[RMDB]
RNA sequence: GGGAACGACUCGAGUAGAGUCGAAAAGAUAUGGACCAUCUCACUCUACAAUGAUGUCGGAAACGAUUGAGUAGGUGAGAGUGGUCCUAAGUCAAAAGGUCGUGACAUGUUCGCAUGUCACGACCAAGUCUUUGUUCAUGUUCGCAUGAACAAAGACAAAAGAAACAACAACAACAAC
Reactivity to 2A3 in 0.01 (KOAc 150mM, MgCl2 10mM, bicine 150mM(pH8.5), 24C), signal-to-noise 2, nucleotides 027 to 126: g050a010u080a040u150g000g000a000c000c000a030u020c000u010c000a000c000u300c030u060a010c000a080a300u270g040a050u130g080u040c020g000g010a030a080a050c020g010a010u020u070g030a000g030u010a000g000g020u010g000a000g020a000g010u030g010g010u000c000c000u010a010a020g070u010c020a050a040a000a210g000g000u020c040g070u000g000a000c000a000u010g030u040u120c300g010c100a000u020g000u010c000a000c010g000a000c000c000a000a000
Reactivity to DMS in 0.01 (KOAc 150mM, MgCl2 10mM, bicine 150mM(pH8.5), 24C), signal-to-noise 2, nucleotides 027 to 126: g000a030u000a300u000g000g000a010c000c000a050u010c000u000c000a010c030u010c010u010a010c010a160a220u010g010a070u000g030u010c000g010g010a120a160a170c010g000a010u000u000g000a110g020u000a000g000g010u000g010a010g000a010g020u010g010g010u010c000c000u000a000a120g020u000c060a060a140a190a090g020g010u000c000g000u000g000a000c010a010u000g000u000u000c270g000c000a010u000g000u000c000a000c000g020a000c000c030a010a010

Notes
This 177-nucleotide RNA was probed chemically with 2A3 and DMS. The data come from the RNA Mapping Database (RMDB), library TTRDEL. The DMS profile rests on 2,322 reads. The reactions ran in a buffer of 150 mM KOAc, 10 mM MgCl2 and 150 mM bicine (pH 8.5), at 24 C.